[RMDB]
Conditions: 150 mM KOAc, 10 mM MgCl2 and 150 mM bicine (pH 8.5), 24 C. The record gives the reactivity of an RNA of 177 nucleotides to 2A3 and DMS. For DMS the reverse transcriptase was MarathonRT. 2A3 adducts were read by reverse transcription with SuperScript II with manganese. For 2A3, 1,107 sequencing reads were counted. The data come from the RNA Mapping Database (RMDB), library OK2TST. DMS (dimethyl sulfate) methylates the pairing face of unpaired adenines and cytosines. For DMS, 1,378 sequencing reads were counted.
RNA sequence: GGGAACGACUCGAGUAGAGUCGAAAACACUCAUCAAGCGGGCGGCCUCCGAGGCCGGCAUCGAGGGCCUCGACGAACUGUUUGUGGGCCCCACCGCGAUCGCGUUCGUCACCGGUGAGCCGGUCGACACCCAAUGGGGUUUCGACCCCAUUGGGUGAAAAGAAACAACAACAACAAC
Reactivity to 2A3 in 0.01 (KOAc 150mM, MgCl2 10mM, bicine 150mM(pH8.5), 24C), signal-to-noise 2, nucleotides 027 to 126: c030a030c030u080c040a120u130c100a190a030g050c000g000g000g090c020g010g010c040c000u050c080c120g030a090g000g010c030c030g000g000c020a060u130c040g020a250g020g040g010c000c000u000c020g000a010c010g000a230a270c080u210g080u110u160u120g080u270g020g000g040c000c010c000c010a070c000c000g050c010g020a010u060c080g010c000g070u090u020c040g050u000c030a000c010c020g070g020u080g060a050g010c030c010g000g050u030c030g010a000
Reactivity to DMS in 0.01 (KOAc 150mM, MgCl2 10mM, bicine 150mM(pH8.5), 24C), signal-to-noise 2, nucleotides 027 to 126: c120a150c070u000c040a090u010c070a060a130g010c040g010g020g020c230g000g000c000c020u000c170c050g010a100g010g020c030c000g030g020c150a080u000c130g000a120g020g020g030c010c000u000c030g000a050c030g000a050a130c110u000g010u020u010u010g060u000g000g000g040c020c010c010c000a080c040c010g000c030g000a040u010c100g030c120g000u010u000c030g010u000c030a110c100c040g000g010u000g000a090g020c040c010g010g000u000c070g000a100